[RMDB]
RNA sequence: GGGAACGACUCGAGUAGAGUCGAAAAGAUAUGGAGUGUGGCAGCUUUUGACGCGAGAAGGGUCGGAAACGACCCGGAUCGCGAUAAGCUGCACACUCCUAAGUCAAAGACCACGUUCGCGUGGUCAUCGAAAUUCCAAGUUCGCUUGGAAUUUCGAAAAAGAAACAACAACAACAAC
Reactivity to DMS in 0.01 (KOAc 150mM, MgCl2 10mM, bicine 150mM(pH8.5), 24C), signal-to-noise 2, nucleotides 027 to 126: g020a040u000a300u010g010g000a010g010u000g010u010g000g080c000a000g020c010u000u000u010u000g010a260c050g000c000g020a050g020a300a190g000g000g030u000c000g010g000a080a030a270c030g000a000c000c000c000g000g000a300u000c000g020c000g010a020u000a020a010g040c000u000g010c020a000c000a000c000u000c000c000u020a040a040g020u000c050a090a150a090g010a010c000c000a010c000g010u000u020c300g010c020g040u000g010g020u010c040a020
Reactivity to 2A3 in 0.01 (KOAc 150mM, MgCl2 10mM, bicine 150mM(pH8.5), 24C), signal-to-noise 1, nucleotides 027 to 126: g050a040u060a080u140g010g000a000g020u020g000u140g300g160c000a020g030c040u070u150u120u300g270a140c100g000c000g010a010g000a020a020g040g010g000u010c040g030g000a040a050a100c020g000a000c020c040c000g000g000a000u010c000g030c000g000a000u010a010a000g010c000u000g030c010a000c000a000c000u030c010c000u000a000a010g000u000c020a070a090a040g010a000c000c000a010c000g040u090u080c300g000c000g210u020g000g000u000c020a000